Overview:
The data come from the RNA Mapping Database (RMDB), library OK1LIB. Structure probing data (DMS and 2A3) for a 177-nucleotide construct. For 2A3, 1,023 sequencing reads were counted. The RNA was probed in 150 mM KOAc, 10 mM MgCl2 and 150 mM bicine (pH 8.5) at 24 C. Reactivities are rounded to 0.1 and cut off at 0 and 3. For DMS, 1,480 sequencing reads were counted.
RNA sequence: GGGAACGACUCGAGUAGAGUCGAAAAAAGAAUACACCGAUCGCAAGUGCUAAGUGCAGUAUGUGCUCAGGCGAUCACGCUGUUUACGAGUGUAGUCAGUUCUUAGCUCUCACGACAGAAGAACGUCCGUACGUACCGCAUUCGUGCGGUACGUACGAAAAGAAACAACAACAACAAC
Reactivity to DMS in 0.01 (KOAc 150mM, MgCl2 10mM, bicine 150mM(pH8.5), 24C), signal-to-noise 1, nucleotides 027 to 126: a110a000g000a010a020u000a100c080a110c150c110g010a020u000c030g060c000a230a040g080u010g010c000u000a150a120g010u000g000c030a060g040u000a040u070g040u000g000c000u000c060a070g000g000c020g000a020u000c040a000c110g030c050u000g070u040u060u000a100c190g000a120g020u000g000u030a010g010u000c020a100g000u000u000c000u000u020a110g000c000u000c000u000c060a120c140g000a060c020a080g000a070a050g080a070a120c110g050u000c120
Reactivity to 2A3 in 0.01 (KOAc 150mM, MgCl2 10mM, bicine 150mM(pH8.5), 24C), signal-to-noise 2, nucleotides 027 to 126: a000a000g140a030a060u130a020c130a060c030c030g040a010u010c020g000c020a020a020g060u070g070c010u050a070a130g000u060g130c070a030g050u260a020u140g050u060g010c000u000c010a090g100g010c000g000a050u110c000a010c050g020c020u030g060u170u100u100a080c060g040a040g040u030g010u090a070g060u010c080a040g000u010u010c030u050u070a050g000c000u010c000u010c030a000c060g070a010c040a060g130a110a050g040a000a070c080g000u000c030